[RMDB]
RNA sequence: GGGAACGACUCGAGUAGAGUCGAAAAACGCGAGGCUGCCGGUGAGAGCAAGUCCUAUGGCGACGCUCGCCAGGAAACCGAUUAGCAUAUCGUGUAUGAGGAAGUAUGGCAGUGCUAGUAGAAUGACAAGGUGCAACAUGUUCGCAUGUUGCACCUUAAAAGAAACAACAACAACAAC
Reactivity to 2A3 in 0.01 (KOAc 150mM, MgCl2 10mM, bicine 150mM(pH8.5), 24C), signal-to-noise 1, nucleotides 027 to 126: a000c030g020c010g020a000g010g050c000u000g000c040c000g010g050u060g110a190g020a000g050c070a120a000g070u040c000c000u120a160u240g020g000c050g010a020c040g100c060u060c010g000c000c000a060g160g100a070a000a050c020c080g000a040u030u100a060g100c040a040u070a040u200c040g000u040g050u090a060u120g040a030g000g080a000a070g090u080a080u150g000g000c000a000g020u040g060c010u060a020g000u010a000g050a160a130u100g020a050c040
Reactivity to DMS in 0.01 (KOAc 150mM, MgCl2 10mM, bicine 150mM(pH8.5), 24C), signal-to-noise 2, nucleotides 027 to 126: a070c100g020c020g020a100g010g010c000u000g010c130c010g000g000u000g000a080g010a050g010c060a080a260g030u000c010c090u000a110u000g000g010c040g040a060c230g000c090u000c010g000c030c040a070g000g010a060a080a050c010c000g000a100u010u000a130g010c060a070u010a060u000c040g010u010g010u010a060u000g000a170g000g000a090a070g010u000a080u020g020g040c040a050g010u000g010c020u000a070g000u000a100g010a070a080u000g000a100c150